[RMDB]
RNA sequence: GGGAACGACUCGAGUAGAGUCGAAAAGUGUUCACGAGGCUCACGAGCUUCGCGACGGUGGCGAGCGCUACCUCGGCAAGGGCGUCCUCAAUGCAGUUAACAACGUGAACGAGGAAAUCGCUGACGCAAUCGCUGGUGCAGAAGCCGACGAUCAGCAGAUCGCUUUUACUUUCGAGUAAAAGCGAUCAAAAGAAACAACAACAACAAC
Reactivity to DMS in 0.01 (KOAc 150mM, MgCl2 10mM, bicine 150mM(pH8.5), 24C), signal-to-noise 1, nucleotides 027 to 156: g000u000g040u000u000c020a030c010g000a030g040g000c010u000c030a180c270g010a280g010c000u000u010c010g010c000g010a040c090g050g050u020g020g030c020g020a170g010c010g000c030u000a090c020c020u000c050g000g020c100a110a140g020g020g020c030g020u000c010c030u000c030a070a110u000g000c070a040g020u020u020a120a180c050a080a020c030g000u010g000a030a060c060g000a040g010g010a060a070a100u000c020g000c000u000g000a050c010g000c040a110a020u010c000g040c040u020g040g000u000g000c030a210g030a130a280g020c000c010g000a090c030g000a060u000c050a090g020c030a180
Reactivity to 2A3 in 0.01 (KOAc 150mM, MgCl2 10mM, bicine 150mM(pH8.5), 24C), signal-to-noise 4, nucleotides 027 to 156: g070u050g070u110u030c050a020c060g000a030g010g030c010u020c030a090c170g050a030g030c000u050u050c030g010c040g010a050c050g000g070u060g000g000c080g040a090g060c080g040c050u040a060c000c020u030c020g030g040c050a050a080g050g020g000c020g020u030c010c020u030c030a030a090u210g030c050a010g050u130u150a160a050c090a070a010c110g070u090g080a030a030c060g000a020g010g000a000a120a030u160c040g010c020u000g030a030c040g000c060a030a050u110c050g000c020u030g000g040u090g000c060a070g050a140a000g030c010c000g030a080c020g010a130u060c010a020g020c020a000